The data come from the RNA Mapping Database (RMDB), library TTRINS. Chemical mapping of a 177-nucleotide RNA with DMS. The RNA was probed in 150 mM KOAc, 10 mM MgCl2 and 150 mM bicine (pH 8.5) at 24 C. The DMS profile rests on 1,553 reads.
[RMDB]
RNA sequence: GGGAACGACUCGAGUAGAGUCGAAAAGAUAUGGAAUAUCAACAAAAUCGUUAGCAUACAACGAGCAGUUCGGAAACGAACUGAACUACUCGGUAUGCUAACGAUUUUGUUGAGUAUUCCUAAGUCACGUCAUCAUAACGUUCGCGUUAUGAUGACGAAAAGAAACAACAACAACAAC
Reactivity to DMS in 0.01 (KOAc 150mM, MgCl2 10mM, bicine 150mM(pH8.5), 24C), signal-to-noise 1, nucleotides 027 to 126: g020a060u010a300u010g010g000a020a000u000a030u000c010a010a010c010a000a000a000a000u000c010g000u010u000a000g010c000a000u000a000c010a120a200c040g000a000g000c000a010g000u000u010c000g030g010a130a120a210c220g030a080a090c020u000g000a010a010c000u000a250c010u000c060g000g000u000a000u030g000c000u000a000a000c000g000a000u000u000u000u000g000u030u000g000a000g050u000a010u000u000c020c000u000a010a120g020u000c030a160